[RMDB]
RNA sequence: GGGAACGACUCGAGUAGAGUCGAAAACAAGAGAACUGAGUCACUCUCUAGAGUAGGUUUUGGGAGAUCUCUUCAGCAACCCAUAAGAACCACCCACUAAUGCCAUUGGGCAGUGUGUGAAAAAUAAUACGAUUACCUCAUUCGUGAGGUAAUCGUAAAAAGAAACAACAACAACAAC
Reactivity to DMS in 0.01 (KOAc 150mM, MgCl2 10mM, bicine 150mM(pH8.5), 24C), signal-to-noise 1, nucleotides 027 to 126: c150a050a050g000a020g000a120a110c040u000g000a140g040u010c080a070c040u000c000u000c190u000a090g040a070g000u000a110g040g000u000u040u000u000g000g040g000a080g000a050u000c000u000c010u000u000c140a070g000c100a120a210c030c000c000a110u010a070a140g000a070a170c130c000a040c070c020c010a090c080u020a070a170u000g000c010c030a300u000u040g020g000g010c000a040g020u000g000u000g020u000g010a000a050a040a050a080u040a080a120
Structure probing data (DMS) for a 177-nucleotide construct.